[RMDB]
RNA sequence: GGGAACGACUCGAGUAGAGUCGAAAAAUCAUGACGAAGAAAGGACGAGAGCAAGCUGAGAGGCAUGCUGAGAGGCAAGCUCAAAGAAAGGAGCGUCCAACUCCUUACCCUCGUCUUUUAAAAAGAAACUAUCAUAGAGGUUCGCCUCUAUGAUAGUAAAAGAAACAACAACAACAAC
Reactivity to DMS in 0.01 (KOAc 150mM, MgCl2 10mM, bicine 150mM(pH8.5), 24C), signal-to-noise 5, nucleotides 027 to 126: a070u010c090a090u010g010a100c170g010a140a110g000a040a010a030g010g000a020c020g010a030g010a010g040c070a060a120g020c040u000g000a300g000a130g010g020c050a060u000g000c000u010g010a160g010a160g000g020c030a060a100g030c000u000c010a020a090a060g000a110a040a030g000g010a030g010c030g010u010c150c110a120a180c010u000c000c000u000u000a120c030c030c010u000c010g000u000c010u000u000u000u000a020a060a050a070a060g000a110a090
Reactivity to 2A3 in 0.01 (KOAc 150mM, MgCl2 10mM, bicine 150mM(pH8.5), 24C), signal-to-noise 2, nucleotides 027 to 126: a000u140c090a100u150g110a050c090g060a050a140g130a110a030a000g030g000a000c010g010a010g010a010g070c060a070a040g040c040u040g010a040g000a030g080g100c030a010u030g000c000u030g020a040g000a010g030g010c020a020a040g020c000u000c010a020a060a000g050a010a030a000g030g000a010g000c010g060u030c000c020a030a080c000u020c000c000u000u020a060c020c000c010u000c000g000u000c000u010u030u000u020a070a090a010a000a000g090a100a190